[RMDB]
RNA sequence: GGGAACGACUCGAGUAGAGUCGAAAAUCCUGGGGGGUGGGCUCAGUCUGUUCCACCUCCCCUCAGACUAGCCUAGAUCAAAGGCAGGGUUCUCUGCAUACUAGUAUGGUGGGUCAAGAAAUCAGCGUAAGUGUCAAACAUUCGUGUUUGACACUUAAAAAGAAACAACAACAACAAC
Reactivity to 2A3 in 0.01 (KOAc 150mM, MgCl2 10mM, bicine 150mM(pH8.5), 24C), signal-to-noise 7, nucleotides 027 to 126: u010c000c010u010g000g000g000g000g000g000u020g010g010g000c010u020c050a100g280u080c100u150g080u170u040c000c000a000c000c000u020c000c000c000c000u010c030a030g000a000c010u020a020g020c010c010u080a100g030a180u150c100a110a110a020g050g000c000a010g070g000g000u300u110c150u000c000u080g000c000a030u030a150c000u030a070g140u070a080u150g030g010u040g040g010g010u010c010a000a030g070a000a010a040u130c060a030g070c020g100
Reactivity to DMS in 0.01 (KOAc 150mM, MgCl2 10mM, bicine 150mM(pH8.5), 24C), signal-to-noise 5, nucleotides 027 to 126: u000c000c000u010g010g010g020g020g010g030u000g020g010g010c060u020c180a110g000u040c120u000g010u020u030c000c010a020c000c000u010c010c000c000c000u020c100a130g000a020c020u000a220g020c040c010u000a110g010a170u030c170a080a130a110g000g000c000a040g010g000g010u010u030c080u020c010u000g010c020a030u010a130c070u000a080g010u000a060u020g000g020u000g000g020g000u000c080a170a080g000a030a050a040u010c070a050g010c170g000